[RMDB]
RNA sequence: GGGAACGACUCGAGUAGAGUCGAAAAAGCGAGCCCAGCGCCAGCAGCUCGCCAAAGGCCCAGUCGAUCUUGCCUUCAUAGGCCAUCUCCCGGCGCUUCUCCAGCACCGGUUGGACUCGCGGGUGCGAUGACCCUACGUAUUCGUACGUAGGGUCAUAAAAGAAACAACAACAACAAC
Reactivity to DMS in 0.01 (KOAc 150mM, MgCl2 10mM, bicine 150mM(pH8.5), 24C), signal-to-noise 3, nucleotides 027 to 126: a150g010c010g010a040g020c010c110c100a130g000c020g020c070c100a100g040c080a130g000c020u000c060g030c000c080a040a130a090g010g010c030c010c050a070g020u000c060g000a050u000c050u000u000g020c030c020u030u010c170a120u010a070g010g000c020c110a040u000c030u000c080c030c030g000g010c030g020c040u000u000c100u010c100c090a140g000c000a030c030c020g010g020u000u010g010g000a080c070u010c040g000c070g000g000g000u000g010c060g010
Reactivity to 2A3 in 0.01 (KOAc 150mM, MgCl2 10mM, bicine 150mM(pH8.5), 24C), signal-to-noise 2, nucleotides 027 to 126: a000g020c000g000a020g010c030c000c030a030g000c010g030c030c010a010g000c000a020g020c020u000c010g000c000c000a130a110a010g090g000c000c000c000a000g050u050c040g010a130u030c040u040u080g030c010c010u030u160c100a180u270a200g050g020c000c020a050u070c040u060c000c000c000g040g000c050g030c030u130u050c040u000c040c030a010g020c010a020c030c030g060g000u060u070g070g020a050c040u020c070g060c070g050g020g010u080g020c010g020